Chemical mapping of a 207-nucleotide RNA with DMS and 2A3. DMS adducts were read by reverse transcription with MarathonRT.
[RMDB]
RNA sequence: GGGAACGACUCGAGUAGAGUCGAAAAUACUGACGAAAAGUUACUACAUCAAACAAAGAUAGUUUUUGCUAAAAUUGGUUUAUCUGGGAACAGUUAUGACUUUAUCUGGACUACCCAAAUGAUAGCAAACAGCAAUUUUAACGUCUGCAAAAGAUUACAAAGAGAUCCUAUUCGUAGGAUCUCUUUGAAAAGAAACAACAACAACAAC
Reactivity to DMS in 0.01 (KOAc 150mM, MgCl2 10mM, bicine 150mM(pH8.5), 24C), signal-to-noise 2, nucleotides 027 to 156: u010a070c030u000g010a090c000g020a270a040a020a080g040u000u000a060c030u000a120c050a180u000c030a160a160a130c070a120a130a220g000a090u000a090g010u000u000u000u000u000g000c020u000a030a030a110a050u010u000g020g010u000u020u000a030u000c000u000g020g040g050a090a080c090a070g000u020u000a080u020g010a030c020u000u030u000a050u030c020u000g010g000a050c020u000a100c150c000c020a010a110a000u000g010a170u000a050g050c000a050a020a090c200a110g010c060a060a020u020u000u010u010a060a120c050g000u000c020u010g010c080a130a110a080a200g000a130u000u010a140
Reactivity to 2A3 in 0.01 (KOAc 150mM, MgCl2 10mM, bicine 150mM(pH8.5), 24C), signal-to-noise 2, nucleotides 027 to 156: u090a010c030u020g020a000c000g070a010a020a160a010g060u100u070a030c030u070a030c020a130u120c070a140a110a140c050a070a220a010g020a040u090a040g020u030u050u020u020u050g010c020u050a070a000a070a100u060u020g040g000u070u140u030a030u010c040u040g000g000g040a050a080c020a020g040u100u150a100u150g100a070c020u050u040u060a040u160c020u020g030g000a050c030u080a050c020c010c000a010a070a100u080g010a030u040a000g030c030a000a000a050c020a050g030c020a030a030u030u000u110u140a090a010c000g030u010c030u050g050c020a010a130a060a040g050a080u090u140a050